[RMDB]
RNA sequence: GGGAACGACUCGAGUAGAGUCGAAAAAGCACUGCGUACGCGCAGUGCACCGGGUUACCGCGGCCUGUCCACGAUGGAAGGUCAUUUGAUUCUCGCUGAUUUUCAGGAGCUAUUUACUAUGCGUAAAGUAGCGACAGCAGUUCGCUGCUGUCGCUACAAAAGAAACAACAACAACAAC
Reactivity to 2A3 in 0.01 (KOAc 150mM, MgCl2 10mM, bicine 150mM(pH8.5), 24C), signal-to-noise 2, nucleotides 027 to 126: a020g000c000a010c000u000g040c040g020u000a000c110g000c000g000c030a000g000u000g000c000a000c000c000g060g000g070u110u170a190c000c030g070c010g030g010c000c010u130g260u110c000c000a070c150g140a110u300g040g040a000a020g000g060u000c050a080u100u100u070g050a090u230u000c010u020c060g170c010u050g020a070u040u030u220u040c020a040g000g100a020g020c010u020a110u080u110u000a080c120u080a120u140g060c100g010u030a020a060a040

Conditions: 150 mM KOAc, 10 mM MgCl2 and 150 mM bicine (pH 8.5), 24 C. An RNA of 177 nucleotides, treated with 2A3 and read out base by base. As a SHAPE reagent, 2A3 marks flexible, mostly unpaired nucleotides at the ribose 2'-OH. The data come from the RNA Mapping Database (RMDB), library RFM100.